[RMDB]
RNA sequence: GGGAACGACUCGAGUAGAGUCGAAAAUGACAGUGUACAGGCGCGAAAGCGUCUGAUAAUUAGCAAUGACUGUAUGCUAAUUGACUAUUGUGAAAACAAUAGAAUGCUGUCUAACAGUCAUUGAUACGAUCUAGAUUUAUUUCGAUAGGUCUAGAUCAAAAGAAACAACAACAACAAC
Reactivity to DMS in 0.01 (KOAc 150mM, MgCl2 10mM, bicine 150mM(pH8.5), 24C), signal-to-noise 9, nucleotides 027 to 126: u020g010a010c010a010g010u000g010u010a000c010a010g000g010c000g010c000g000a130a090a170g000c000g010u000c000u000g000a020u000a010a010u000u000a000g000c000a070a160u010g000a010c000u000g010u000a240u010g000c000u000a000a000u000u010g000a000c000u000a000u000u000g000u000g000a150a090a140a020c000a010a010u000a000g000a040a010u000g000c000u000g000u010c000u000a090a020c000a000g000u000c000a170u040u020g010a140u030a100c220
Reactivity to 2A3 in 0.01 (KOAc 150mM, MgCl2 10mM, bicine 150mM(pH8.5), 24C), signal-to-noise 9, nucleotides 027 to 126: u060g000a000c000a000g000u010g000u020a000c000a000g000g000c000g000c000g030a040a030a020g000c000g000u000c000u000g000a000u000a000a000u000u000a000g000c000a000a020u040g000a000c000u000g000u000a010u030g000c000u000a000a000u000u000g000a000c000u000a000u000u000g000u000g080a050a030a010a010c000a000a000u000a000g000a000a000u020g000c000u000g000u000c000u010a020a000c000a000g000u000c000a010u020u210g070a030u030a050c080

The record gives the reactivity of an RNA of 177 nucleotides to DMS and 2A3. Reactivities are given for positions 27 through 126. Source: RMDB library OK1LIB, as collected in RNAgym. DMS adducts were read by reverse transcription with MarathonRT. For 2A3 the reverse transcriptase was SuperScript II with manganese.